[RMDB]
This 207-nucleotide RNA was probed chemically with DMS and 2A3. For 2A3 the reverse transcriptase was SuperScript II with manganese. Reactivities are given for positions 27 through 156. The reactions ran in a buffer of 150 mM KOAc, 10 mM MgCl2 and 150 mM bicine (pH 8.5), at 24 C. For 2A3, 1,131 sequencing reads were counted. DMS adducts were read by reverse transcription with MarathonRT.
RNA sequence: GGGAACGACUCGAGUAGAGUCGAAAAUAGAUGCCGUUCGCGGCAUCUAAAAAAGCGUACUACCUGAGGGAUUGUCAGAAUAAUCCCAAAUAGGAUGUUCUUGGAUUUAUCCUACCCACCAGGUAUCGCAAAAAAGAGGACGCUUCGGCGUCCUCAAUCUUAGGUUCAAGUUCGCUUGAACCUAAGAAAAAGAAACAACAACAACAAC
Reactivity to DMS in 0.01 (KOAc 150mM, MgCl2 10mM, bicine 150mM(pH8.5), 24C), signal-to-noise 1, nucleotides 027 to 156: u000a020g000a020u010g020c010c020g030u000u020c300g080c050g090g000c010a010u000c000u000a000a030a040a090a050a120g010c000g000u000a120c150u000a020c000c000u020g000a180g030g010g010a040u010u000g030u000c030a160g000a040a050u000a100a090u000c000c020c030a030a060a030u010a080g030g030a030u010g030u000u000c030u030u030g010g000a100u000u000u000a030u000c000c090u010a060c010c020c050a300c130c000a000g000g000u000a010u020c010g050c020a020a060a120a080a070a150g000a000g000g030a030c000g000c030u000u000c300g020g020c020g000u000c000c000u020c000a020a110
Reactivity to 2A3 in 0.01 (KOAc 150mM, MgCl2 10mM, bicine 150mM(pH8.5), 24C), signal-to-noise 2, nucleotides 027 to 156: u120a000g000a000u000g000c000c000g010u000u030c300g030c000g060g000c000a000u000c000u000a010a000a000a000a010a010g000c000g030u070a080c040u010a000c010c000u020g020a070g000g010g000a020u090u120g020u020c030a030g010a030a030u300a140a110u110c040c020c080a040a120a120u240a020g000g000a000u010g000u030u000c050u110u200g150g000a060u200u220u070a030u140c030c000u040a080c040c020c050a040c010c000a030g000g000u020a040u300c110g000c100a030a020a000a110a000a040g000a010g000g010a000c020g000c000u100u070c300g140g000c010g000u010c000c000u000c000a000a000